RNA sequence: GGGAACGACUCGAGUAGAGUCGAAAAGAUAUGGACACCAAUUGGGAGAGGUAUUCGGAAACGAAUAUACCUCUUUGAUCAAUGGUGUCCUAAGUCAAAUACUUAGUAUAGUUCGCUAUACUAAGUAGACUCUAAUUACGUUCGCGUAAUUAGAGUCAAAAGAAACAACAACAACAAC
Reactivity to 2A3 in 0.01 (KOAc 150mM, MgCl2 10mM, bicine 150mM(pH8.5), 24C), signal-to-noise 4, nucleotides 027 to 126: g000a000u030a010u060g000g000a010c010a000c000c030a050a300u040u030g030g070g170a070g010a010g010g010u000a010u000u010c020g000g000a060a030a010c000g000a010a010u150a030u050a100c010c010u000c030u040u070u150g040a030u020c000a010a020u010g010g010u000g000u000c000c000u010a010a000g000u010c000a020a000a250u110a010c000u000u010a000g010u000a000u000a010g050u030u060c300g000c180u000a000u000a010c000u010a000a000g000u000a040
Reactivity to DMS in 0.01 (KOAc 150mM, MgCl2 10mM, bicine 150mM(pH8.5), 24C), signal-to-noise 4, nucleotides 027 to 126: g020a020u000a180u030g000g000a010c000a000c000c000a010a090u000u000g010g020g010a040g010a010g010g020u000a010u000u000c000g000g000a040a040a080c000g010a030a030u010a070u000a090c010c000u000c000u000u010u020g010a190u010c010a010a030u000g010g010u010g020u000c000c000u000a020a060g000u000c020a150a130a240u000a000c000u000u000a010g010u000a010u010a000g010u000u020c300g010c000u000a030u000a010c000u000a000a010g010u000a020